Structure probing data (DMS) for a 177-nucleotide construct.
For DMS the reverse transcriptase was MarathonRT.

[RMDB]
RNA sequence: GGGAACGACUCGAGUAGAGUCGAAAAGAUAUGGAAACAGGUCCCAUGCCGGAUAGAUGCCGAAGAACAGCUUCGGAAACGAAGCUGGGAGGCAUCUAUCCGGACCCAUGAAACUGUUUCCUAAGUCCAAUCAUGGACUGUUCGCAGUCCAUGAUUGAAAAGAAACAACAACAACAAC
Reactivity to DMS in 0.01 (KOAc 150mM, MgCl2 10mM, bicine 150mM(pH8.5), 24C), signal-to-noise 1, nucleotides 027 to 126: g000a070u010a280u000g060g010a030a030a000c030a020g040g030u000c150c070c020a100u000g010c050c030g010g000a000u000a010g010a020u000g000c000c000g000a140a200g010a170a130c020a020g000c010u000u000c010g030g000a040a090a210c030g020a000a000g020c000u000g000g020g010a140g030g010c000a000u000c000u000a000u000c010c040g000g010a040c140c300c040a060u010g010a130a010a140c020u000g020u000u000u000c000c010u010a060a090g010u000c040